[RMDB]
An RNA of 177 nucleotides, treated with 2A3 and DMS and read out base by base.
For DMS the reverse transcriptase was MarathonRT.
RNA sequence: GGGAACGACUCGAGUAGAGUCGAAAACGACGGGUCUUCGGACCCGUCGAAAUAAUGCGUAGCUCGCGCUACGCAGGCAUCGAGUAGGUCCAGCCACCUACAAAAGCUUCGAGUUCGCUCGAAGCAACAUCCCUUACACGUUCGCGUGUAAGGGAUGAAAAGAAACAACAACAACAAC
Reactivity to 2A3 in 0.01 (KOAc 150mM, MgCl2 10mM, bicine 150mM(pH8.5), 24C), signal-to-noise 2, nucleotides 027 to 126: c010g010a010c020g000g010g020u010c020u070u080c220g110g020a010c000c000c010g000u000c000g000a000a000a000u100a000a040u040g000c010g000u000a000g000c010u030c150g090c030g000c040u010a000c000g000c010a010g010g020c010a110u130c100g010a020g030u020a010g010g020u040c030c010a000g040c030c020a010c000c000u010a020c000a010a100a000a000g020c000u000u000c000g000a010g030u030u080c170g060c080u000c000g000a000a000g000c000a000a000
Reactivity to DMS in 0.01 (KOAc 150mM, MgCl2 10mM, bicine 150mM(pH8.5), 24C), signal-to-noise 3, nucleotides 027 to 126: c020g000a000c020g010g010g020u000c000u000u020c230g040g000a020c000c000c000g010u000c000g010a010a050a070u010a120a070u010g000c010g000u000a000g010c010u000c300g010c300g000c000u000a000c000g000c010a000g000g030c070a120u010c190g000a200g000u000a010g020g010u000c010c030a160g000c110c120a110c010c010u000a020c020a090a070a090a080g000c000u000u000c000g000a010g020u000u010c170g000c000u000c000g010a030a000g030c010a030a040

It was measured as part of the RMDB library M2PK50.